[RMDB]
RNA sequence: GGGAACGACUCGAGUAGAGUCGAAAAGAUAUGGAGAUGUUGGUGACAUGUGCAACGAGUCGGAAACGACUCUAAGCACAACAGCACCACCAUCUCCUAAGUCAAAACGACAAGUUCGCUUGUCGAAGCAUAGGCUUAACUUCGGUUAAGCCUAUGCAAAAGAAACAACAACAACAAC
Reactivity to 2A3 in 0.01 (KOAc 150mM, MgCl2 10mM, bicine 150mM(pH8.5), 24C), signal-to-noise 2, nucleotides 027 to 126: g000a010u050a030u090g000g010a010g000a010u010g020u030u020g000g020u010g040a150c070a290u260g000u000g000c030a070a030c130g000a000g010u010c000g000g040a050a030a070c020g020a020c000u000c010u020a080a040g000c010a010c000a020a020c040a010g080c000a000c000c000a000c010c000a000u010c000u000c000c000u010a000a000g000u000c020a000a000a050a130c000g000a000c000a020a000g000u020u180c300g130c190u010u040g010u000c010g060a050a000
Reactivity to DMS in 0.01 (KOAc 150mM, MgCl2 10mM, bicine 150mM(pH8.5), 24C), signal-to-noise 2, nucleotides 027 to 126: g000a060u010a300u010g000g000a000g000a020u000g030u000u000g000g010u010g000a100c170a300u000g010u000g020c000a090a180c300g000a000g010u000c000g000g000a150a140a250c000g010a000c000u000c000u000a030a300g000c000a000c000a020a070c300a290g000c030a000c020c020a020c080c000a030u030c000u000c000c000u000a010a010g000u010c020a040a010a120a170c050g000a000c000a010a000g000u000u040c300g000c030u000u000g000u000c000g000a140a100